Source information:
An RNA of 177 nucleotides, treated with DMS and read out base by base.
RNA sequence: GGGAACGACUCGAGUAGAGUCGAAAAGAUAUGGACGUCUGUGUAUCAAGCGUGUAGGAGUAGCUUGGUUCGGAAACGAACCAAGCUACUCCUACCGCUGACCACGCACACAUGACGUCCUAAGUCAGACACUAAUAAAGUUCGCUUUAUUAGUGUCAAAAGAAACAACAACAACAAC
Reactivity to DMS in 0.01 (KOAc 150mM, MgCl2 10mM, bicine 150mM(pH8.5), 24C), signal-to-noise 3, nucleotides 027 to 126: g010a040u010a300u000g000g000a020c000g000u000c000u010g030u000g010u000a140u010c150a110a050g020c010g010u010g020u000a000g000g020a060g030u000a010g010c000u000u000g020g010u000u000c000g000g000a080a060a280c000g070a020a020c000c000a010a020g010c000u000a010c000u010c000c000u000a000c010c020g020c020u000g000a060c300c260a090c290g010c300a030c020a020c040a040u020g010a010c000g020u000c010c000u000a010a050g000u010c080a150
The DMS profile rests on 4,451 reads.